Structure probing data (2A3 and DMS) for a 207-nucleotide construct. For 2A3, 2,244 sequencing reads were counted. The data come from the RNA Mapping Database (RMDB), library OK3TST. Conditions: 150 mM KOAc, 10 mM MgCl2 and 150 mM bicine (pH 8.5), 24 C.
RNA sequence: GGGAACGACUCGAGUAGAGUCGAAAAUUGCAGAUUUUGUAAAAUAAUCAGGAUUGAAUGGGUAUGUACUAAGAGAGACCACAAACAUGAACAGCUGAGGUUUGCAUAGGAUACCAUCCACAGCAGGUACAGUUAAGACUGUUCCAUACAAUACAUGAAUUCGUUCUGAUUUCGAUCAGAACGAAUUAAAAGAAACAACAACAACAAC
Reactivity to 2A3 in 0.01 (KOAc 150mM, MgCl2 10mM, bicine 150mM(pH8.5), 24C), signal-to-noise 4, nucleotides 027 to 156: u100u030g000c010a000g100a140u090u060u170u150g120u150a070a110a110a100u130a050a080u050c050a050g050g040a070u020u080g030a070a070u070g030g000g000u080a030u080g030u030a060c040u090a180a030g030a010g020a010g020a080c000c000a010c070a070a160a010c040a060u100g040a050a010c020a040g040c030u040g020a050g010g070u020u070u090g000c050a040u050a040g010g030a030u050a140c020c010a010u020c060c010a030c020a020g080c030a010g010g000u030a010c000a000g010u040u100a100a030g060a080c010u010g000u030u000c010c000a010u050a120c080a030a110u070a130c020a030u200g100
Reactivity to DMS in 0.01 (KOAc 150mM, MgCl2 10mM, bicine 150mM(pH8.5), 24C), signal-to-noise 2, nucleotides 027 to 156: u000u030g030c050a090g040a130u000u010u000u000g010u000a070a080a100a130u020a060a110u010c070a150g030g040a110u000u000g000a060a050u000g010g010g110u000a070u010g040u010a080c070u000a120a100g020a130g000a150g040a090c020c020a090c060a070a040a070c040a130u000g000a060a130c090a130g010c050u010g000a120g000g010u000u000u000g050c060a110u010a080g040g000a130u000a100c050c060a090u000c020c010a060c020a110g010c040a060g000g010u000a070c010a090g000u000u010a060a140g010a090c030u030g000u010u000c020c040a120u010a090c060a040a090u000a070c040a100u010g000